Structure probing data (2A3 and DMS) for a 177-nucleotide construct. The DMS profile rests on 1,165 reads. It was measured as part of the RMDB library RFM100. The reactions ran in a buffer of 150 mM KOAc, 10 mM MgCl2 and 150 mM bicine (pH 8.5), at 24 C. For 2A3, 653 sequencing reads were counted.
RNA sequence: GGGAACGACUCGAGUAGAGUCGAAAAUCCAAGAACGUCUUUUGCCUUGACCGGGGCGUUCUCAGGAGGGGGGCUUUCUAGUCCUUGGUAGUUGCUAGAAUGAAUGCACUAGUUUGAGGGAGGGAGUCUCGAUCACACUAUUCGUAGUGUGAUCGAGAAAAGAAACAACAACAACAAC
Reactivity to 2A3 in 0.01 (KOAc 150mM, MgCl2 10mM, bicine 150mM(pH8.5), 24C), signal-to-noise 2, nucleotides 027 to 126: u000c020c010a000a000g000a000a000c000g000u000c000u000u110u100u200g040c030c000u130u210g080a100c060c020g000g000g000g010c000g000u010u000c060u020c000a030g000g040a080g040g020g010g000g020g030c000u100u140u000c060u150a120g030u020c030c090u090u070g050g000u120a040g010u010u130g010c010u020a090g020a210a050u120g050a010a070u110g090c000a000c040u000a000g050u120u100u200g060a040g000g000g010a110g060g000g000a070g080u020
Reactivity to DMS in 0.01 (KOAc 150mM, MgCl2 10mM, bicine 150mM(pH8.5), 24C), signal-to-noise 1, nucleotides 027 to 126: u010c000c010a200a010g050a000a000c080g010u000c000u020u010u090u010g010c150c030u000u000g000a070c180c130g000g010g000g020c000g030u000u000c000u000c150a140g020g000a080g000g010g010g000g000g000c090u000u070u020c040u020a020g000u050c110c000u040u010g050g010u000a090g000u030u020g020c000u010a120g000a040a110u020g020a240a140u070g040c040a090c080u010a090g000u000u020u010g000a140g000g050g000a100g030g000g000a020g000u010